Conditions: 150 mM KOAc, 10 mM MgCl2 and 150 mM bicine (pH 8.5), 24 C. Structure probing data (2A3 and DMS) for a 177-nucleotide construct. Reactivities are given for positions 27 through 126. DMS adducts were read by reverse transcription with MarathonRT.
[RMDB]
RNA sequence: GGGAACGACUCGAGUAGAGUCGAAAAGAUAUGGACUAUGAACUACUGUCUGUGAUGAAGCUUUGAUCUAAUUUACUCGGAAACGAGUAAAUUAGGGAGCUUUGCAUGGCAGCAUAGUCCUAAGUCAGUUAAUACACUUGUUCGCAAGUGUAUUAACAAAAGAAACAACAACAACAAC
Reactivity to 2A3 in 0.01 (KOAc 150mM, MgCl2 10mM, bicine 150mM(pH8.5), 24C), signal-to-noise 5, nucleotides 027 to 126: g030a020u060a040u140g000g010a000c010u000a010u020g010a060a060c060u300a050c010u300g050u070c030u020g080u060g120a300u160g110a110a030g020c040u300u300u130g060a040u060c000u010a010a000u000u010u000a010c010u000c020g000g000a020a040a050c000g010a000g000u000a000a000a000u000u000a000g000g000g020a000g000c000u000u010u030g020c000a070u240g010g000c010a000g030c000a000u000a000g000u010c010c000u000a020a000g030u020c060a000
Reactivity to DMS in 0.01 (KOAc 150mM, MgCl2 10mM, bicine 150mM(pH8.5), 24C), signal-to-noise 4, nucleotides 027 to 126: g000a030u000a240u010g000g000a020c000u000a010u000g010a070a030c060u010a300c010u000g000u000c010u000g020u000g000a100u010g020a070a050g010c000u000u000u020g010a050u010c000u000a010a000u000u000u000a000c000u000c000g020g000a070a030a110c000g020a010g010u000a000a000a000u000u000a000g000g000g010a010g010c000u000u000u010g000c000a020u010g010g010c000a010g000c010a000u000a010g010u000c000c000u000a010a070g000u010c030a150